[RMDB]
RNA sequence: GGGAACGACUCGAGUAGAGUCGAAAACAAACUAUGCACGUUAUAGAUUCCUUCGGAUCUUUGACAGUUGGGUAUCACGUUCUGAAAGCUGGCACAGUGAAUCAACUUAUUCAAUUUGCAUCCAACGGCGGUACUCGACAUUCGUGUCGAGUACCGCAAAAGAAACAACAACAACAAC
Reactivity to 2A3 in 0.01 (KOAc 150mM, MgCl2 10mM, bicine 150mM(pH8.5), 24C), signal-to-noise 2, nucleotides 027 to 126: c040a010a080a070c010u050a010u100g070c110a010c160g030u080u040a020u090a090g130a150u000u130c010c000u170u050c080g070g010a030u020c000u000u020u080g040a090c050a000g060u070u040g060g080g050u080a140u130c000a040c050g000u150u070c040u050g070a020a130a090g050c030u070g060g010c000a030c020a160g050u000g030a000a010u030c010a000a000c050u080u130a050u140u130c010a000a030u000u000u220g000c020a030u000c000c000a080a020c200g040
This 177-nucleotide RNA was probed chemically with 2A3. Source: RMDB library OK1LIB, as collected in RNAgym. The RNA was probed in 150 mM KOAc, 10 mM MgCl2 and 150 mM bicine (pH 8.5) at 24 C.